[RMDB]
RNA sequence: GGGAACGACUCGAGUAGAGUCGAAAAGUGACUGUUCGCAGUCACAAAAAAACCUUUGUGCACCGGAAAGCGAUAAGCGUAGUGGAUCCCAUUGGGAUCCAUCACGCUUUUGACGCUUUCGUGCACUCUGGUAAAAAUCGGAGCUUCGGCUCCGAAAGGUUAAGACGUACUUCGGUACGUCUUAACCAAAAGAAACAACAACAACAAC
Reactivity to 2A3 in 0.01 (KOAc 150mM, MgCl2 10mM, bicine 150mM(pH8.5), 24C), signal-to-noise 2, nucleotides 027 to 156: g010u000g000a010c020u010g050u090u140c270g020c130a000g000u030c000a000c010a000a040a000a020a000a000a040c000c020u010u020u050g000u000g000c040a030c070c120g280g020a040a000a010g000c020g030a040u010a050a010g010c000g010u000a010g020u020g000g010a000u010c000c010c080a290u300u300g000g000g000a000u000c000c000a010u010c010a000c020g000c000u020u020u010u030g040a010c020g020c000u010u000u000c010g000u010g000c000a000c000u000c000u020g000g040u090a080a150a000a000a020u020c000g010g000a000g000c010u060u090c260g090g000c000u030c000c020g000a040a010a010
Chemical mapping of a 207-nucleotide RNA with 2A3. For 2A3 the reverse transcriptase was SuperScript II with manganese. For 2A3, 1,714 sequencing reads were counted. Conditions: 150 mM KOAc, 10 mM MgCl2 and 150 mM bicine (pH 8.5), 24 C. As a SHAPE reagent, 2A3 marks flexible, mostly unpaired nucleotides at the ribose 2'-OH.